[RMDB]
RNA sequence: GGGAACGACUCGAGUAGAGUCGAAAAUAAAGGGUAUGAGACAUGACGGAAUUAAAGGUGUUUGCUAUGUUGUUACACCGUGUGUCAGGCUGCAAGCUCCCUUUGUCACAGCCUCCUGGUGAUUUGAGUCACAUUGCGUAUUCGUACGCAAUGUGACAAAAGAAACAACAACAACAAC
Reactivity to DMS in 0.01 (KOAc 150mM, MgCl2 10mM, bicine 150mM(pH8.5), 24C), signal-to-noise 2, nucleotides 027 to 126: u010a070a050a080g000g020g020u020a060u000g040a110g020a090c030a050u000g010a060c040g010g000a090a070u000u000a010a130a090g000g000u000g010u000u010u010g000c060u000a060u010g020u000u020g000u000u000a140c040a080c010c010g000u000g010u010g000u000c050a070g020g000c030u020g020c080a030a110g010c070u010c020c010c000u000u000u000g000u000c100a100c070a030g000c060c020u000c040c050u010g010g000u000g020a120u000u000u000g000a300
Source: RMDB library OK2TRN, as collected in RNAgym. Structure probing data (DMS) for a 177-nucleotide construct. The reactions ran in a buffer of 150 mM KOAc, 10 mM MgCl2 and 150 mM bicine (pH 8.5), at 24 C. DMS adducts were read by reverse transcription with MarathonRT. The DMS profile rests on 1,944 reads. Reactivities are given for positions 27 through 126. Reactivities are rounded to 0.1 and cut off at 0 and 3.